[RMDB]
RNA sequence: GGGAACGACUCGAGUAGAGUCGAAAAGCAUAUGUUCGCAUAUGCAAAAAAGCGUACUACGAAGGACAUGCUCCACUCACCGAGUCCCAAAUAGGACGAUGAGGUGAAGAAGAGCAACAGCCUUCGUAUCGCAAAAAGAAGGCGUUCGCGCCUUCAACGGACACAUAUGGUUCGCCAUAUGUGUCCGAAAAGAAACAACAACAACAAC
Reactivity to 2A3 in 0.01 (KOAc 150mM, MgCl2 10mM, bicine 150mM(pH8.5), 24C), signal-to-noise 2, nucleotides 027 to 156: g010c000a000u070a000u000g020u080u110c190g030c160a020u010a000u000g030c080a000a000a000a000a230a000g040c040g020u070a080c040u000a000c030g000a000a000g010g020a000c020a190u020g010c000u010c020c010a040c050u000c020a000c000c000g000a050g020u000c080c040c030a300a300a210u290a130g000g010a060c130g060a140u160g100a040g000g030u090g000a020a010g000a050a010g000a000g070c000a030a000c020a010g030c000c000u010u010c000g000u000a000u010c000g110c000a070a010a000a000a070g000a000a000g000g010c020g030u000u010c120g050c010g000c080c000u020u000c020a020a000
An RNA of 207 nucleotides, treated with 2A3 and read out base by base. Reactivities are rounded to 0.1 and cut off at 0 and 3. For 2A3 the reverse transcriptase was SuperScript II with manganese. It was measured as part of the RMDB library RNAMAK.